Notes:
This 177-nucleotide RNA was probed chemically with 2A3 and DMS. Conditions: 150 mM KOAc, 10 mM MgCl2 and 150 mM bicine (pH 8.5), 24 C. The 2A3 profile rests on 18,279 reads. For DMS, 11,656 sequencing reads were counted.
RNA sequence: GGGAACGACUCGAGUAGAGUCGAAAAGAUAUGGAAUGUUGAGUCGCAACAGCUCUCUCGGAAACGAGAGAGACAUGCGGACUCACUGCAUUCCUAAGUCAAAGGCAGGGACUUCGGUCCCUGCCAACUAUCCAUAGAUGUUCGCAUCUAUGGAUAGAAAAGAAACAACAACAACAAC
Reactivity to 2A3 in 0.01 (KOAc 150mM, MgCl2 10mM, bicine 150mM(pH8.5), 24C), signal-to-noise 5, nucleotides 027 to 126: g020a020u090a040u160g000g000a010a010u010g020u080u080g050a010g000u010c010g010c080a040a130c040a280g050c010u000c000u010c010u000c000g010g030a090a080a070c020g000a000g000a000g000a000g000a010c000a010u040g030c050g160g100a060c000u000c000a020c060u050g000c000a000u000u010c000c000u020a160a010g040u030c060a110a060a100g020g000c010a000g020g000g020a000c000u080u200c300g090g000u000c000c000c010u010g000c000c000a000a000
Reactivity to DMS in 0.01 (KOAc 150mM, MgCl2 10mM, bicine 150mM(pH8.5), 24C), signal-to-noise 8, nucleotides 027 to 126: g010a060u010a300u010g000g000a010a010u000g010u000u000g000a020g010u010c010g010c020a060a060c300a190g000c000u000c000u000c000u000c000g010g010a120a110a220c000g010a010g000a010g000a010g000a010c090a090u000g010c030g030g010a010c000u000c000a050c300u000g000c010a000u000u010c000c000u000a060a120g010u000c050a100a090a150g000g010c000a020g000g000g010a010c010u000u010c280g040g010u000c000c000c000u000g000c000c000a010a020